[RMDB]
RNA sequence: GGGAACGACUCGAGUAGAGUCGAAAAGAAAAAGUUUUACAAUCACAUGUGCUUAUUUUUCGCACAAAAGAUGUUUUUCCUUGGCGACAACACGAUGUCAAACUUGUCUUUUUCUUAGCGAUUUCGCUCUGUCGUUGAUAUUCGUAUCAACGACAGAAAAAGAAACAACAACAACAAC
Reactivity to 2A3 in 0.01 (KOAc 150mM, MgCl2 10mM, bicine 150mM(pH8.5), 24C), signal-to-noise 2, nucleotides 027 to 126: g040a010a090a030a020a000g020u080u050u140u110a060c040a050a190u020c010a020c010a030u060g020u010g000c060u210u050a210u210u300u120u170u230c020g010c000a010c000a020a060a000a040g020a070u070g040u080u030u010u080u000c030c000u060u120g120g010c040g030a020c030a070a010c020a000c050g050a000u100g010u050c000a000a040a090c030u040u080g040u090c000u000u050u010u000u040c000u030u030a050g010c020g110a180u050u090u190c040g000c000
Reactivity to DMS in 0.01 (KOAc 150mM, MgCl2 10mM, bicine 150mM(pH8.5), 24C), signal-to-noise 3, nucleotides 027 to 126: g010a010a050a060a060a040g010u010u000u000u000a060c060a050a100u000c060a080c160a160u010g020u010g000c020u000u010a160u010u000u000u000u010c220g010c000a030c020a020a030a050a130g000a040u010g000u000u000u000u000u010c020c030u000u000g010g010c080g020a020c300a040a030c090a040c110g000a050u020g010u000c030a030a070a090c090u000u000g010u000c000u000u000u000u000u020c020u020u000a060g010c050g020a270u000u010u010c050g020c000